Structure probing data (DMS and 2A3) for a 207-nucleotide construct. It was measured as part of the RMDB library M2RFPK. For DMS, 4,346 sequencing reads were counted. Reactivities are given for positions 27 through 156.

RNA sequence: GGGAACGACUCGAGUAGAGUCGAAAAAUACAUUCCUGUGCCGGCAAUACAGUGUGUAUGGAGGUUUCAAUGGCUCGGAAGUGCCAGCAAACCGGCGUAGAUAUUAGCAGACGUAUGGGCGUAAGACAAAAGAGAAUGAUGUUCGCAUCAUUCUCAACAGAAGACAAAUCUUCGGAUUUGUCUUCUGAAAAGAAACAACAACAACAAC
Reactivity to DMS in 0.01 (KOAc 150mM, MgCl2 10mM, bicine 150mM(pH8.5), 24C), signal-to-noise 2, nucleotides 027 to 156: a150u000a090c050a180u000u000c290c010u000g010u000g000c050c020g010g020c030a100a070u000a020c040a130g030u020g000u000g020u010a070u010g000g010a130g000g000u000u000u010c070a130a130u010g010g030c030u000c020g050g030a140a180g000u010g030c020c020a080g000c070a020a070a060c010c000g010g040c040g020u000a050g000a100u000a090u010u000a070g010c060a050g020a050c060g020u000a040u010g040g010g000c050g020u000a040a120g000a140c060a060a030a070a160g010a060g030a040a010u000g020a010u000g000u000u010c300g050c000a020u000c010a000u000u000c000u000c000a020a070
Reactivity to 2A3 in 0.01 (KOAc 150mM, MgCl2 10mM, bicine 150mM(pH8.5), 24C), signal-to-noise 3, nucleotides 027 to 156: a000u070a020c010a030u060u070c000c000u010g030u030g020c000c000g050g040c050a050a040u040a090c040a070g090u020g000u010g030u190a060u080g050g020a020g050g000u010u000u100c090a160a130u070g010g000c030u020c060g110g060a110a070g060u070g040c000c000a020g010c060a030a010a030c000c000g020g010c010g020u040a010g030a120u060a040u190u120a020g030c040a030g010a050c020g040u090a060u110g010g030g000c020g020u030a040a060g080a050c040a050a100a020a010g000a000g000a000a000u000g000a000u020g020u070u070c170g010c060a000u000c000a000u000u000c000u020c000a000a000